The record gives the reactivity of an RNA of 207 nucleotides to 2A3 and DMS. For DMS the reverse transcriptase was MarathonRT. Values cover nucleotides 27 to 156. The DMS profile rests on 4,830 reads.
RNA sequence: GGGAACGACUCGAGUAGAGUCGAAAACCAGCUUGCCUGUGUCCUAGGGAAUUGGAAGGUCAUCCUUCACAGGAUCGUGUGGAAGUCCUGCUCGGGGCGGAAGCAUUAUAACCAUUCGAGCUAGUCAAAAACCGGCUGAUCUUCGGAUCAGCCGGAACAAAGAUAGAGUGUUCGCACUCUAUCUUUGAAAAGAAACAACAACAACAAC
Reactivity to 2A3 in 0.01 (KOAc 150mM, MgCl2 10mM, bicine 150mM(pH8.5), 24C), signal-to-noise 4, nucleotides 027 to 156: c010c000a010g000c030u040u090g050c000c000u010g000u010g020u090c020c060u070a100g030g020g070a110a150u160u090g050g030a080a040g080g020u130c040a060u080c010c000u060u080c040a030c020a070g030g010a040u040c060g010u020g000u030g040g000a030a020g010u010c000c000u040g120c120u100c180g000g010g000g010c010g000g010a010a010g010c000a000u010u090a050u090a100a050c040c020a040u080u120c020g010a000g020c030u060a040g150u190c080a030a040a020a130a160c010c010g020g000c000u000g000a000u000c000u030u060c200g030g000a010u000c000a010g000c030c000g000g000a000a000
Reactivity to DMS in 0.01 (KOAc 150mM, MgCl2 10mM, bicine 150mM(pH8.5), 24C), signal-to-noise 3, nucleotides 027 to 156: c020c010a140g020c070u000u010g020c010c010u000g030u010g030u010c030c030u000a080g020g000g010a100a080u010u010g000g010a070a070g020g020u020c050a090u040c000c020u010u000c160a120c090a100g010g010a020u000c090g020u000g030u010g020g010a300a200g010u000c010c000u000g050c120u010c070g040g040g010g030c010g020g010a300a140g050c060a090u050u000a100u000a090a160c020c020a130u000u010c030g010a120g000c020u000a040g000u010c050a030a070a080a090a170c000c000g020g020c020u000g000a000u000c020u000u010c300g030g010a010u000c000a020g010c020c000g000g000a000a010